[RMDB]
RNA sequence: GGGAACGACUCGAGUAGAGUCGAAAACUCUUGCAGAUAAUUCAUAACACGCAGCCCUCAACGAUGAAGGCUGCGUCUCCCGAGAGAACGGGACCGGACAAAGGCGUCCUCGUCAGGCCACUGACGGCUAUGUAAUAACGUUCGCGUUAUUACAUAGAAAAGAAACAACAACAACAAC
Reactivity to 2A3 in 0.01 (KOAc 150mM, MgCl2 10mM, bicine 150mM(pH8.5), 24C), signal-to-noise 8, nucleotides 027 to 126: c010u030c020u040u130g020c050a040g050a240u100a130a100u290u180c070a060u070a220a060c020a010c090g000c000a000g000c000c010c000u010c020a100a170c160g130a080u200g010a010a010g000g000c000u000g000c000g000u000c000u000c010c010c000g040a050g010a010g010a150a030c020g000g010g020a020c030c050g040g000a040c040a050a150a060g160g020c060g020u020c000c010u010c000g010u000c000a010g020g050c070c060a130c050u010g020a010c000g010g000
Reactivity to DMS in 0.01 (KOAc 150mM, MgCl2 10mM, bicine 150mM(pH8.5), 24C), signal-to-noise 6, nucleotides 027 to 126: c040u010c030u010u000g010c110a090g000a100u010a070a060u000u010c090a060u000a100a130c180a050c000g000c000a020g000c000c000c020u000c010a100a140c300g000a140u000g010a020a020g000g010c000u000g000c010g000u000c040u000c010c010c010g010a170g000a090g000a080a110c050g010g000g010a040c090c050g000g000a080c080a060a070a150g010g020c060g010u000c020c030u000c010g010u000c010a030g000g010c130c240a100c020u000g000a030c030g000g010

Structure probing data (2A3 and DMS) for a 177-nucleotide construct. The data come from the RNA Mapping Database (RMDB), library RFMREP. 2A3 is a SHAPE reagent: it acylates the 2'-hydroxyl of flexible nucleotides of all four kinds. For DMS, 7,385 sequencing reads were counted.